[RMDB]
RNA sequence: GGGAACGACUCGAGUAGAGUCGAAAAGAUUUACGGCGGGAAAUGUCCCGGGUGCGCGCCGACGUCCCGGGUGCGGCACCGACCGAAAGGCGCUGAAACGGCACCGACCGAAACCGCCGGAAAGAAAGCGUAUAUACGGUUUCGACCGUAUAUACGCAAAAGAAACAACAACAACAAC
Reactivity to DMS in 0.01 (KOAc 150mM, MgCl2 10mM, bicine 150mM(pH8.5), 24C), signal-to-noise 2, nucleotides 027 to 126: g000a160u000u000u010a090c030g010g020c000g060g000g000a070a110a100u020g010u010c000c040c000g010g020g030u000g020c010g010c060g030c100c070g040a130c030g010u000c050c000c020g000g000g030u000g000c000g030g000c020a070c030c010g000a120c070c090g010a040a090a110g010g000c000g010c020u010g000a050a090a220c090g000g030c020a120c060c080g010a110c050c040g000a060a140a160c000c000g030c010c000g000g010a060a040a040g010a070a100a180
Reactivity to 2A3 in 0.01 (KOAc 150mM, MgCl2 10mM, bicine 150mM(pH8.5), 24C), signal-to-noise 1, nucleotides 027 to 126: g030a000u040u050u120a090c030g020g030c010g000g020g030a040a100a060u100g070u070c020c010c000g050g000g030u140g000c020g000c060g020c090c030g060a160c030g050u010c010c020c000g040g030g000u000g010c050g000g050c010a020c040c040g010a100c010c010g030a100a030a000g000g000c020g000c030u060g050a150a140a070c020g000g010c010a050c060c030g080a100c000c040g030a100a020a000c000c000g000c000c020g000g030a000a020a000g080a050a070a000
Structure probing data (DMS and 2A3) for a 177-nucleotide construct. It was measured as part of the RMDB library OK2TRN. For DMS the reverse transcriptase was MarathonRT. The 2A3 profile rests on 1,392 reads. Values cover nucleotides 27 to 126.